[RMDB]
RNA sequence: GGGAACGACUCGAGUAGAGUCGAAAAAUUAGUAAAGAAAACUUAGGAUCAAAGAUAUUGUCAAUUCAUUGUUCCUUCAAUACCUAUCAUCAUCUCGCAUCAAUGUCAAGCUAUGGCAGGUCUGCUGCGUGCAAAGUUUUUUCGAAAACUUUGCACGAAAAGAAACAACAACAACAAC
Reactivity to DMS in 0.01 (KOAc 150mM, MgCl2 10mM, bicine 150mM(pH8.5), 24C), signal-to-noise 1, nucleotides 027 to 126: a030u000u070a070g020u000a060a070a180g000a150a150a140a110c050u000u000a110g020g000a090u000c050a010a050a150g000a050u000a040u010u010g000u030c170a040a120u000u010c050a070u000u000g000u000u000c000c000u000u000c260a000a000u000a050c070c000u000a050u000c050a050u010c040a080u000c030u000c110g000c100a110u000c060a070a050u000g010u000c020a030a080g010c070u010a040u000g020g000c030a020g000g000u000c110u000g040c080u010g030